[RMDB]
RNA sequence: GGGAACGACUCGAGUAGAGUCGAAAAGCAGUUCCGAAGGGGUCACUGCGAACACUUGACUACCGGUCGGGCCAGUCUUGUGGAUUAGGACGGACUACUACCGGUCGGGCCAGUAGGACGUCCGAAAGGCAAGGAGCAGCUUCGGCUGUUCCUUGCCAAAAGAAACAACAACAACAAC
Reactivity to 2A3 in 0.01 (KOAc 150mM, MgCl2 10mM, bicine 150mM(pH8.5), 24C), signal-to-noise 6, nucleotides 027 to 126: g010c000a010g010u030u010c010c010g040a090a090g050g040g010g030u130c050a000c020u020g000c000g020a080a010c040a010c030u030u080g030a010c000u020a040c030c000g030g090u070c050g020g010g010c040c020a030g020u020c000u050u070g050u050g050g070a090u030u080a030g000g010a000c000g000g000a000c000u010a000c010u010a020c010c030g290g170u250c110g080g020g030c050c010a000g000u010a000g010g000a000c000g000u010c000c000g000a000a010a000
Reactivity to DMS in 0.01 (KOAc 150mM, MgCl2 10mM, bicine 150mM(pH8.5), 24C), signal-to-noise 4, nucleotides 027 to 126: g010c010a010g030u010u080c010c010g020a140a110g040g000g000g010u020c300a010c040u000g020c040g010a110a080c080a050c030u000u010g000a050c010u000a090c010c010g000g000u010c060g000g000g000c040c020a090g020u020c050u000u000g000u020g010g000a170u020u040a100g000g000a010c030g000g000a070c000u000a000c010u000a130c030c010g010g030u060c240g010g020g010c150c110a020g000u010a000g000g000a050c000g000u000c000c000g000a010a040a140